Background
The record gives the reactivity of an RNA of 177 nucleotides to DMS and 2A3. The DMS profile rests on 37,050 reads. The reactions ran in a buffer of 150 mM KOAc, 10 mM MgCl2 and 150 mM bicine (pH 8.5), at 24 C. For 2A3 the reverse transcriptase was SuperScript II with manganese.
RNA sequence: GGGAACGACUCGAGUAGAGUCGAAAAAGAGCGGUGUAAACAUAAGAGGCUGAGAAGUCUCUUCAGCCGUCAUCGUUGAAUUAUUACUGGUUUAAGAAUACGGCUGAACUUAGACUAGUAGUUGAUAGAUUGAGUUUGUAUUCGUACAGGCUCAAUCAAAAGAAACAACAACAACAAC
Reactivity to DMS in 0.01 (KOAc 150mM, MgCl2 10mM, bicine 150mM(pH8.5), 24C), signal-to-noise 8, nucleotides 027 to 126: a070g010a070g010c000g000g000u000g010u040a070a090a110c200a110u040a000a020g000a030g010g010c000u010g000a200g000a160a020g010u000c010u000c010u000u000c080a070g010c010c000g000u010c050a040u010c050g000u000u000g010a090a080u020u020a040u030u010a010c010u000g010g000u000u000u000a000a010g000a110a070u020a090c050g010g020c050u000g010a090a140c010u000u000a010g000a000c000u000a010g010u000a010g010u010u000g010a120u030a100
Reactivity to 2A3 in 0.01 (KOAc 150mM, MgCl2 10mM, bicine 150mM(pH8.5), 24C), signal-to-noise 9, nucleotides 027 to 126: a000g100a010g000c000g010g000u030g010u050a090a100a010c030a020u120a010a010g000a000g000g000c000u000g010a010g020a080a000g010u010c000u000c000u040u000c000a020g010c010c010g030u020c010a050u040c020g010u020u120g110a130a060u160u040a040u050u040a040c000u000g000g010u000u000u000a010a030g040a060a040u110a120c040g070g020c060u060g030a060a040c000u000u000a000g000a000c000u000a000g010u000a000g000u000u040g040a050u040a080